Structure probing data (DMS and 2A3) for a 177-nucleotide construct. Conditions: 150 mM KOAc, 10 mM MgCl2 and 150 mM bicine (pH 8.5), 24 C. DMS adducts were read by reverse transcription with MarathonRT. For DMS, 1,032 sequencing reads were counted. Reactivities are given for positions 27 through 126. The 2A3 profile rests on 2,254 reads. Reactivities are rounded to 0.1 and cut off at 0 and 3.
[RMDB]
RNA sequence: GGGAACGACUCGAGUAGAGUCGAAAAGAUAUGGAUACAUGGUGUGCCUGAUGACCUUGCUCGGAAACGAGCAAGCAAGGGCCACCUGUGUAUCCUAAGUCAAAACCAAAGGCUUCGGCCUUUGGAAGUUCAGAAACAUCUUCGGAUGUUUCUGAACAAAAGAAACAACAACAACAAC
Reactivity to DMS in 0.01 (KOAc 150mM, MgCl2 10mM, bicine 150mM(pH8.5), 24C), signal-to-noise 2, nucleotides 027 to 126: g000a040u000a300u040g000g000a030u010a010c000a040u000g000g020u010g010u020g060c010c000u000g010a180u000g010a090c300c010u000u010g000c030u000c010g010g000a130a100a300c000g000a050g020c020a000a000g000c040a010a070g010g000g000c010c000a000c000c000u060g030u000g010u030a000u000c000c000u000a000a110g000u000c020a080a100a190a130c000c020a000a040a000g000g000c010u000u010c250g040g020c000c000u000u000u010g020g020a070a060
Reactivity to 2A3 in 0.01 (KOAc 150mM, MgCl2 10mM, bicine 150mM(pH8.5), 24C), signal-to-noise 2, nucleotides 027 to 126: g020a020u080a040u160g020g010a000u000a000c000a000u010g000g000u070g170u300g000c010c030u260g100a300u230g030a080c020c020u010u000g050c000u000c030g050g000a040a100a050c020g030a000g000c010a010a000g010c010a070a260g020g000g050c020c010a010c000c000u000g000u030g000u000a000u000c010c000u000a120a000g010u000c040a050a020a130a250c010c000a000a000a000g000g000c000u090u210c300g170g010c000c000u060u010u020g010g000a020a000